[RMDB]
RNA sequence: GGGAACGACUCGAGUAGAGUCGAAAAGGAUAUAACUUCGGUUAUAUCCAAAGAAACUGGAAGGCGCGGCGAGCUGCAGCCGCAGUGAAUCUAAUGCAGCAAAAACUCGAAGCUUCGGCUUCGAGAACAUUUACUAGUGCUUCGGCACUAGUAAAUGAAAAGAAACAACAACAACAAC
Reactivity to 2A3 in 0.01 (KOAc 150mM, MgCl2 10mM, bicine 150mM(pH8.5), 24C), signal-to-noise 2, nucleotides 027 to 126: g000g000a000u000a000u000a020a000c000u020u030c070g000g010u000u010a000u000a000u010c000c010a000a000a010g000a020a150a000c100u150g050g140a160a070g150g030c040g020c010g040g020c020g020a060g000c010u000g000c010a010g000c000c010g000c030a030g050u070g050a010a050u030c050u160a170a030u110g000c010a000g030c000a030a020a020a020a060c000u000c000g000a000a000g010c000u060u150c210g080g000c000u000u000c000g020a000g000a000a000
Reactivity to DMS in 0.01 (KOAc 150mM, MgCl2 10mM, bicine 150mM(pH8.5), 24C), signal-to-noise 2, nucleotides 027 to 126: g010g010a030u000a000u000a030a000c000u000u020c190g030g000u010u000a000u000a000u010c010c000a020a090a120g000a060a150a090c080u010g010g000a070a100g010g020c090g030c010g010g000c000g010a110g030c000u010g000c000a210g010c010c000g000c000a020g020u000g000a090a110u000c070u000a050a040u000g000c000a010g030c020a090a070a020a090a070c000u000c000g000a000a010g010c000u010u020c230g000g010c000u010u000c000g000a000g000a040a050

Structure probing data (2A3 and DMS) for a 177-nucleotide construct. For 2A3 the reverse transcriptase was SuperScript II with manganese. The RNA was probed in 150 mM KOAc, 10 mM MgCl2 and 150 mM bicine (pH 8.5) at 24 C.